[RMDB]
RNA sequence: GGGAACGACUCGAGUAGAGUCGAAAAGGGGUCGUCCCAAGAGAGCCGAUUGUGGAGCUUGGAUUUAUGGGACUGAAGCCUCCACGGUCCCAUUGUCAGCUCCAUAAAGGCUCUUGGGACGACGGAGGCACCCAAAACACUCAGUUCGCUGAGUGAAGUAAUUUUAUCGAUUCGUCGAUAAAAUUACAAAAGAAACAACAACAACAAC
Reactivity to 2A3 in 0.01 (KOAc 150mM, MgCl2 10mM, bicine 150mM(pH8.5), 24C), signal-to-noise 5, nucleotides 027 to 156: g050g010g030g010u000c000g010u000c000c000c010a010a000g100a010g010a020g060c020c040g300a300u170u120g020u020g010g010a020g000c050u190u240g170g000a050u200u300u150a020u070g000g010g000a000c010u010g030a070a020g010c000c010u000c000c000a030c010g000g000u000c000c010c010a000u000u030g030u040c060a000g010c000u000c020c010a020u040a020a010a010g000g010c000u000c000u000u000g000g000g000a000c000g000a000c020g000g010a000g010g010c010a040c000c000c000a040a050a030a040c010a000c000u000c000a010g050u120u120c140g070c140u000g000a010g000u010g010a040a010
Reactivity to DMS in 0.01 (KOAc 150mM, MgCl2 10mM, bicine 150mM(pH8.5), 24C), signal-to-noise 2, nucleotides 027 to 156: g020g060g000g040u010c000g040u010c000c000c020a070a100g000a120g000a130g010c000c030g000a180u000u000g070u000g020g000a030g030c020u010u020g050g000a130u000u010u000a050u010g010g000g000a060c020u000g020a070a210g020c010c010u000c060c030a300c050g000g000u010c000c010c000a080u000u000g000u000c050a080g040c000u000c010c000a010u000a010a060a130g030g020c010u000c000u010u010g010g000g010a000c010g040a020c050g010g010a050g030g040c020a090c010c000c010a060a090a110a230c020a020c000u020c000a040g010u000u010c300g010c000u010g020a040g010u010g000a040a190
Notes:
The data come from the RNA Mapping Database (RMDB), library RNAMAK. Chemical mapping of a 207-nucleotide RNA with 2A3 and DMS. The RNA was probed in 150 mM KOAc, 10 mM MgCl2 and 150 mM bicine (pH 8.5) at 24 C. The 2A3 profile rests on 5,647 reads. Reactivities are given for positions 27 through 156. 2A3 is a SHAPE reagent: it acylates the 2'-hydroxyl of flexible nucleotides of all four kinds.